[RMDB]
RNA sequence: GGGAACGACUCGAGUAGAGUCGAAAACAGCAGGUGCGCCAGUUGGUCGGUCUGAUGGAGCGCGCCGGAGACGGCAUGGAUGCGCCUGCCGUGGCGAAUCGCGAAAUUUUGUUUAUGCAACUACUGGGAUUAAAUAGCCGUUCGCGGCUAUUUAAUCAAAAGAAACAACAACAACAAC
Reactivity to 2A3 in 0.01 (KOAc 150mM, MgCl2 10mM, bicine 150mM(pH8.5), 24C), signal-to-noise 6, nucleotides 027 to 126: c020a000g020c000a000g000g000u030g000c030g000c020c000a130g110u160u180g250g010u090c080g020g130u020c050u080g120a220u120g080g020a060g120c080g000c050g020c040c000g010g010a020g020a020c020g000g040c000a040u070g000g040a150u090g020c000g030c000c000u000g000c000c020g010u050g040g010c090g030a090a090u130c050g020c020g090a030a070a040u130u160u060u020g080u040u110u030a120u160g030c050a080a070c040u120a080c070u170g120g010
Reactivity to DMS in 0.01 (KOAc 150mM, MgCl2 10mM, bicine 150mM(pH8.5), 24C), signal-to-noise 2, nucleotides 027 to 126: c060a100g030c050a040g000g030u000g000c040g010c010c010a020g000u010u020g020g010u020c020g030g000u010c020u000g000a240u050g000g000a170g000c050g000c070g020c000c010g000g000a150g030a060c000g020g000c000a110u000g010g010a090u000g020c010g000c000c000u000g000c010c030g000u000g010g000c070g010a080a060u030c060g000c070g010a060a100a110u030u020u000u020g010u010u020u000a130u010g020c080a030a120c150u000a120c080u000g020g000
The data come from the RNA Mapping Database (RMDB), library OK1LIB. The record gives the reactivity of an RNA of 177 nucleotides to 2A3 and DMS. The reactions ran in a buffer of 150 mM KOAc, 10 mM MgCl2 and 150 mM bicine (pH 8.5), at 24 C. For DMS the reverse transcriptase was MarathonRT. For DMS, 3,718 sequencing reads were counted. For 2A3 the reverse transcriptase was SuperScript II with manganese.